The record gives the reactivity of an RNA of 177 nucleotides to 2A3.

RNA sequence: GGGAACGACUCGAGUAGAGUCGAAAAAUUGGCGUCCGUACGUACCCUCUCAACUCUAAAACUCUUGUAGUUUAAAUCUAAUCUAAACUUUAUAAACGGCACUUCCUGCGUGUCCAUGCCCGCGGGCUUGCAUACGGAGCUUCGGCUCCGUAUGCAAAAAAGAAACAACAACAACAAC
Reactivity to 2A3 in 0.01 (KOAc 150mM, MgCl2 10mM, bicine 150mM(pH8.5), 24C), signal-to-noise 1, nucleotides 027 to 126: a000u040u080g060g030c040g000u060c000c000g000u000a050c040g020u030a030c000c030c030u060c000u000c100a000a030c000u030c080u260a060a100a020a000c010u060c020u100u160g030u300a090g150u010u070u090a000a100a150u060c030u060a000a000u000c000u030a040a140a000c000u030u070u060a190u120a130a130a000c000g030g000c030a010c000u070u040c030c000u010g030c060g000u000g030u000c020c020a020u060g010c050c000c000g010c010g020g000g000c000